[RMDB]
Chemical mapping of a 207-nucleotide RNA with DMS and 2A3. For 2A3, 4,694 sequencing reads were counted. Reactivities are given for positions 27 through 156. The DMS profile rests on 8,727 reads. For DMS the reverse transcriptase was MarathonRT. The RNA was probed in 150 mM KOAc, 10 mM MgCl2 and 150 mM bicine (pH 8.5) at 24 C.

RNA sequence: GGGAACGACUCGAGUAGAGUCGAAAAGGGCUUGACGCAUCGCCCGAAUAGGAUGCAUGUGCUUUUGCACUAAGAUAAAUGUCCGUAUAGUAGGGGACCUAGAACCUACUCAUUAAUGUCCGAAGAGUCUGGGACGAUCAUCAGGCGAGACUAAGAAACGUAAUAUCGAUUUCGAUCGAUAUUACGUAAAAGAAACAACAACAACAAC
Reactivity to DMS in 0.01 (KOAc 150mM, MgCl2 10mM, bicine 150mM(pH8.5), 24C), signal-to-noise 4, nucleotides 027 to 156: g020g020g020c010u000u000g030a050c030g030c110a040u000c020g020c010c020c010g000a090a130u000a130g010g000a020u010g020c070a190u000g020u000g000c020u000u020u010u000g030c000a060c010u000a090a110g020a110u000a050a120a080u010g000u000c040c050g020u000a160u000a070g010u000a040g010g010g010g010a200c180c110u000a140g010a140a180c020c000u000a030c020u000c090a090u000u010a070a110u000g010u000c030c020g010a140a110g000a190g000u000c010u010g010g020g040a030c020g020a040u000c040a090u000c040a020g000g010c020g010a140g000a100c080u010a050a120g000a110a150
Reactivity to 2A3 in 0.01 (KOAc 150mM, MgCl2 10mM, bicine 150mM(pH8.5), 24C), signal-to-noise 6, nucleotides 027 to 156: g050g000g010c020u030u050g070a030c030g020c060a020u030c010g030c000c010c010g010a020a060u070a040g000g010a000u020g030c050a060u100g020u000g000c010u190u110u180u300g000c000a000c020u020a050a060g020a100u100a120a190a050u120g020u040c040c010g030u120a100u080a060g000u000a000g000g000g000g000a050c020c020u040a040g050a050a010c000c000u000a000c000u000c020a010u030u210a160a080u130g020u010c030c010g050a060a030g030a030g090u030c020u130g010g020g050a080c020g040a090u050c020a020u000c010a020g010g020c030g040a070g010a040c020u110a120a010g040a110a170